[RMDB]
RNA sequence: GGGAACGACUCGAGUAGAGUCGAAAACCCCGCACCUUCGGGUGCGGGGAACUACCGAGAAUGCGACUCGGUAUAUACGCAAAUCCCUUGGAAACAAGGGAAUUCACGAACAGUUCGCUGUUCGUAAGAAACUACGUAUGUUCGCAUACGUAGUUUCAAAAGAAACAACAACAACAAC
Reactivity to 2A3 in 0.01 (KOAc 150mM, MgCl2 10mM, bicine 150mM(pH8.5), 24C), signal-to-noise 2, nucleotides 027 to 126: c000c000c010c000g020c010a030c020c030u090u130c300g130g010g000u010g030c080g040g000g010g000a020a010c010u010a010c000c010g000a000g020a090a130u230g080c100g130a090c020u000c010g000g060u000a000u000a010u000a010c030g000c030a030a080a140u060c000c000c000u000u000g030g010a050a050a020c000a000a020g010g000g050a000a030u030u030c060a010c020g000a010a000c000a010g030u050u080c160g030c080u010g000u010u000c000g000u010a010a050
Reactivity to DMS in 0.01 (KOAc 150mM, MgCl2 10mM, bicine 150mM(pH8.5), 24C), signal-to-noise 3, nucleotides 027 to 126: c020c010c000c000g060c000a000c010c000u010u020c170g030g030g030u000g020c020g020g000g010g010a000a000c090u000a070c010c000g000a020g000a100a140u010g020c200g010a090c010u000c000g010g010u000a010u000a060u000a080c190g030c170a060a060a140u000c000c000c000u000u010g000g000a140a110a190c000a010a010g000g000g010a020a010u010u000c110a040c010g010a010a030c000a010g000u010u010c190g000c000u000g000u010u000c000g010u000a030a100